[RMDB]
RNA sequence: GGGAACGACUCGAGUAGAGUCGAAAAGAUAUGGAGCGUGAAUAGCAACAGCGUGGUGUCGGAAACGACAUUCACGACAUGCUACACGCUCCUAAGUCAAAGUACCGAUGCUUCGGCAUCGGUACAAGUUGAAGACGGAGUUCGCUCCGUCUUCAACAAAAGAAACAACAACAACAAC
Reactivity to 2A3 in 0.01 (KOAc 150mM, MgCl2 10mM, bicine 150mM(pH8.5), 24C), signal-to-noise 2, nucleotides 027 to 126: g000a000u020a010u020g000g020a010g000c010g000u050g100a300a300u080a040g000c110a060a270c160a300g000c000g000u010g020g010u000g000u010c000g000g000a030a000a020c000g040a010c010a040u300u300c020a030c010g040a050c020a130u300g000c000u000a010c000a010c000g000c000u060c000c000u010a000a000g020u000c000a140a010a010g000u000a000c000c010g000a010u000g000c020u040u110c280g180g000c000a000u000c000g020g000u000a000c000a010a000
Reactivity to DMS in 0.01 (KOAc 150mM, MgCl2 10mM, bicine 150mM(pH8.5), 24C), signal-to-noise 2, nucleotides 027 to 126: g000a040u000a050u000g000g000a020g000c010g010u000g000a250a200u020a000g000c000a170a210c180a260g030c000g000u000g000g010u020g000u000c020g040g010a030a000a010c000g020a010c000a000u000u020c000a000c020g030a020c060a140u010g060c010u000a060c010a000c000g010c000u000c000c000u000a000a040g020u010c010a080a120a140g020u000a000c000c010g020a010u000g010c000u000u010c190g030g040c000a000u010c000g000g010u000a000c010a030a060